[RMDB]
RNA sequence: GGGAACGACUCGAGUAGAGUCGAAAAGCUUGUGCAGGAAAAGUUGCGUAUACUUUGAGAACCGAUCCUUACUCGUUACCACGCACUAUUGCAAUUAUUAACAAAUUAAUUUGUGAGGAGCAUGCAACUCCAUAUACAAAUUCGUUUGUAUAUGGAGAAAAGAAACAACAACAACAAC
Reactivity to 2A3 in 0.01 (KOAc 150mM, MgCl2 10mM, bicine 150mM(pH8.5), 24C), signal-to-noise 9, nucleotides 027 to 126: g030c040u060u070g030u050g050c040a050g060g100a040a080a070a060g050u100u070g060c060g030u110a080u060a140c050u090u110u180g080a090g020a060a030c030c030g040a060u050c010c010u040u040a060c030u020c030g060u050u060a070c030c020a040c060g020c010a020c040u100a200u100u110g010c010a030a040u080u040a050u100u100a170a060c050a050a070a060u100u150a030a110u090u110u060g020u020g040a080g030g010a010g010c050a040u070g020c010a050a050
Reactivity to DMS in 0.01 (KOAc 150mM, MgCl2 10mM, bicine 150mM(pH8.5), 24C), signal-to-noise 7, nucleotides 027 to 126: g010c060u010u010g020u010g030c090a050g010g000a070a080a080a080g010u000u000g020c080g010u030a080u020a070c050u010u010u020g020a100g000a050a100c050c040g020a200u020c030c010u000u010a040c060u000c040g000u000u020a130c070c030a100c140g000c040a050c060u000a060u010u010g000c010a040a060u030u010a050u020u010a080a050c150a030a050a060u010u020a050a060u010u000u010g000u010g010a070g000g000a060g010c050a060u010g000c090a050a140

Chemical mapping of a 177-nucleotide RNA with 2A3 and DMS. The data come from the RNA Mapping Database (RMDB), library OK1LIB. For DMS the reverse transcriptase was MarathonRT. Reactivities are given for positions 27 through 126. The 2A3 profile rests on 19,820 reads. The RNA was probed in 150 mM KOAc, 10 mM MgCl2 and 150 mM bicine (pH 8.5) at 24 C.